Structure probing data (DMS) for a 177-nucleotide construct.
It was measured as part of the RMDB library TTRINS.
Reactivities are rounded to 0.1 and cut off at 0 and 3.
Values cover nucleotides 27 to 126.
RNA sequence: GGGAACGACUCGAGUAGAGUCGAAAAGAUAUGGAACGUAAUCGUACCGGUAAGCCAGGCGAGAUGUCAUCGGAAACGAUGAUACAUCGAUGAGCCUGGCUUACCGGUACGAUUCGUUCCUAAGUCACAGGGUUAAUUAGUUCGCUAAUUAACCCUGAAAAGAAACAACAACAACAAC
Reactivity to DMS in 0.01 (KOAc 150mM, MgCl2 10mM, bicine 150mM(pH8.5), 24C), signal-to-noise 3, nucleotides 027 to 126: g010a030u000a300u010g000g000a020a000c000g000u010a020a000u000c010g030u000a010c030c010g020g000u010a010a010g000c000c000a010g000g000c000g010a180g000a020u000g000u010c000a020u000c000g000g000a140a110a260c010g030a030u000g010a130u010a060c030a030u010c000g010a140u000g000a300g010c000c000u000g000g010c000u000u000a000c000c000g000g010u000a000c000g000a000u000u000c000g000u000u000c000c000u000a030a070g010u000c060a300